[RMDB]
This 207-nucleotide RNA was probed chemically with 2A3. Values are in units of 0.01, from 0 to 300, in steps of 10. For 2A3 the reverse transcriptase was SuperScript II with manganese. The RNA was probed in 150 mM KOAc, 10 mM MgCl2 and 150 mM bicine (pH 8.5) at 24 C.

RNA sequence: GGGAACGACUCGAGUAGAGUCGAAAAACCACCAGGUUGCCUAAGGAGGGGUGAACCGGCCCAGGUCGGAAACGGAGCAGGUCAAAACUCCCGUGCUGAUCAGUAGUGGGAUCGCGCCUGUGAAUAGCCACUGCACUCCAGCCUGAGCAACAUAGCAGCAUAUACUGCUCUUCGGAGCAGUAUAUGCAAAAGAAACAACAACAACAAC
Reactivity to 2A3 in 0.01 (KOAc 150mM, MgCl2 10mM, bicine 150mM(pH8.5), 24C), signal-to-noise 2, nucleotides 027 to 156: a000c050c020a010c030c030a040g010g030u030u070g010c010c020u050a020a030g010g000a020g000g010g000g010u010g030a070a130c030c030g020g000c000c040c040a110g000g040u020c030g050g000a140a090a050c040g000g030a080g000c020a010g000g060u130c070a000a000a060a130c020u030c000c000c000g000u040g000c010u060g020a250u100c070a020g020u160a020g090u080g020g010g010a000u030c000g000c000g000c060c000u040g000u150g070a160a130u100a070g040c030c020a020c110u090g000c020a020c000u010c000c030a050g020c020c000u030g020a030g000c000a000a000c000a000u130a020g090c070a000